This 207-nucleotide RNA was probed chemically with 2A3 and DMS.
It was measured as part of the RMDB library RNAMAK.
The reactions ran in a buffer of 150 mM KOAc, 10 mM MgCl2 and 150 mM bicine (pH 8.5), at 24 C.
The DMS profile rests on 7,158 reads.
Values cover nucleotides 27 to 156.
RNA sequence: GGGAACGACUCGAGUAGAGUCGAAAAGGGGUCAGUUACGAGGAUCAGAAAGAUCACGAAGAACAUACUGAAGCCUCCACGGUAUGGGAGUGAUCCUUCUGGGAGUAACUGACGGAGGCACCCAAAAGACAAAUACUUCUUCGGAAGUAUUUGUCAACAACAGUAUUAUGUUCGCAUAAUACUGUUGAAAAGAAACAACAACAACAAC
Reactivity to 2A3 in 0.01 (KOAc 150mM, MgCl2 10mM, bicine 150mM(pH8.5), 24C), signal-to-noise 3, nucleotides 027 to 156: g020g020g150g030u000c000a000g000u000u000a010c030g040a170g100g030a040u000c000a000g000a000a000a010g000a000u000c000a010c020g060a140a020g000a000a000c000a000u010a000c010u040g060a140a040g020c000c000u000c000c000a000c000g000g010u000a000u000g010g000g010a010g000u000g000a000u000c000c000u000u000c000u000g000g010g010a050g000u000a000a000c000u000g000a000c000g000g010a000g000g000c000a030c000c010c000a030a110a020a040g000a000c000a000a000a000u000a000c000u010u020c010u050u150c300g140g000a000a000g000u000a000u000u000u000g000u000c000a000a010
Reactivity to DMS in 0.01 (KOAc 150mM, MgCl2 10mM, bicine 150mM(pH8.5), 24C), signal-to-noise 3, nucleotides 027 to 156: g020g040g020g020u000c000a030g000u000u000a010c020g000a200g030g010a110u000c020a030g020a020a020a030g000a010u000c000a000c010g010a110a230g000a170a290c010a030u000a000c000u000g000a030a140g010c030c000u000c000c010a300c060g010g020u000a020u000g000g010g000a060g050u000g000a020u000c010c020u000u010c020u000g000g020g010a130g020u000a000a030c010u000g000a010c010g010g020a030g130g050c020a160c000c000c020a080a070a090a140g000a020c010a000a020a020u000a000c000u000u000c010u000u000c300g040g000a020a010g010u010a000u000u000u000g000u000c000a050a150